[RMDB]
RNA sequence: GGGAACGACUCGAGUAGAGUCGAAAAUCUGAGCGAAUUGAGCCGUCAACGCGUAUCAAAUCGCGCAUUAUAAUUGGAAGGUUGACGCGUACGCGCGUCGAGCACGUGCCGCAACUGUAAGACCUGCUCGUGAGUGUGGUUUCGACCACACUCACGAAAAAGAAACAACAACAACAAC
Reactivity to 2A3 in 0.01 (KOAc 150mM, MgCl2 10mM, bicine 150mM(pH8.5), 24C), signal-to-noise 1, nucleotides 027 to 126: u040c040u090g000a030g030c000g050a000a020u030u010g010a000g000c010c000g100u100c100a130a100c090g010c080g040u010a070u190c000a040a000a060u020c000g040c000g000c070a000u080u240a110u120a230a190u130u080g090g020a130a000g080g000u020u000g020a170c030g000c060g040u000a000c030g030c000g000c030g110u170c060g020a000g030c000a000c010g000u000g040c000c000g000c000a000a010c040u000g110u080a000a070g030a110c000c000u020g030c060
Reactivity to DMS in 0.01 (KOAc 150mM, MgCl2 10mM, bicine 150mM(pH8.5), 24C), signal-to-noise 2, nucleotides 027 to 126: u010c190u020g010a070g020c000g000a090a070u000u010g000a010g000c090c000g010u000c270a100a160c300g010c010g020u000a080u000c050a030a060a050u000c000g000c010g020c040a030u030u010a070u030a060a080u000u000g000g020a150a260g000g020u000u000g000a110c040g040c140g060u000a010c030g000c030g010c000g000u020c270g030a190g000c050a010c000g000u000g010c000c000g000c000a010a000c010u000g000u030a140a100g000a090c020c000u000g000c100